[RMDB]
RNA sequence: GGGAACGACUCGAGUAGAGUCGAAAACUCCCCUCAAAAUCGUUUCAGUCCAAAAUUGAUUCGGCGGCCCUGUCAUGAGGCCGAAACGAAGGCACGUACCCCUUCGAAUGGAGUCGGGGAGUCAGCGAAAGCACUGACCCUUUCGAGGGUCAGUGAACUCAAUCCAAUCUUUCGAGAUUGGAUUGAGAAAAGAAACAACAACAACAAC
Reactivity to 2A3 in 0.01 (KOAc 150mM, MgCl2 10mM, bicine 150mM(pH8.5), 24C), signal-to-noise 3, nucleotides 027 to 156: c000u020c000c000c030c000u040c030a100a090a080a100u090c020g010u010u020u020c030a080g000u040c050c050a100a060a140a140u030u050g030a040u060u030c010g000g000c000g000g040c060c010c020u140g090u160c060a110u090g020a090g040g000c000c000g020a010a010a010c000g000a000a010g030g010c110a020c150g130u150a090c010c000c010c020u000u030c010g040a080a070u150g050g010a040g040u050c050g000g000g000g000a000g010u020c020a000g050c040g150a140a050a000g070c010a000c000u000g000a000c000c010c000u020u080u050c160g050a030g000g000g000u000c000a000g000u000g010a010a000
Reactivity to DMS in 0.01 (KOAc 150mM, MgCl2 10mM, bicine 150mM(pH8.5), 24C), signal-to-noise 2, nucleotides 027 to 156: c020u000c020c000c010c060u000c080a090a110a070a150u000c000g080u010u000u000c020a120g100u030c060c100a110a110a210a110u010u000g020a100u000u000c030g000g020c020g000g000c020c010c000u020g020u040c170a090u040g010a040g010g020c040c010g000a010a080a110c030g000a030a040g050g000c070a040c060g010u010a080c030c020c010c000u010u010c040g000a160a120u000g000g010a090g010u000c040g000g010g020g010a050g020u000c010a120g000c050g000a080a090a180g020c010a000c010u000g030a010c000c010c000u000u000u000c240g020a050g020g020g020u000c000a070g000u000g000a020a080

Conditions: 150 mM KOAc, 10 mM MgCl2 and 150 mM bicine (pH 8.5), 24 C. This 207-nucleotide RNA was probed chemically with 2A3 and DMS. It was measured as part of the RMDB library M2RFPK. For DMS, 2,649 sequencing reads were counted. The 2A3 profile rests on 1,518 reads. 2A3 adducts were read by reverse transcription with SuperScript II with manganese.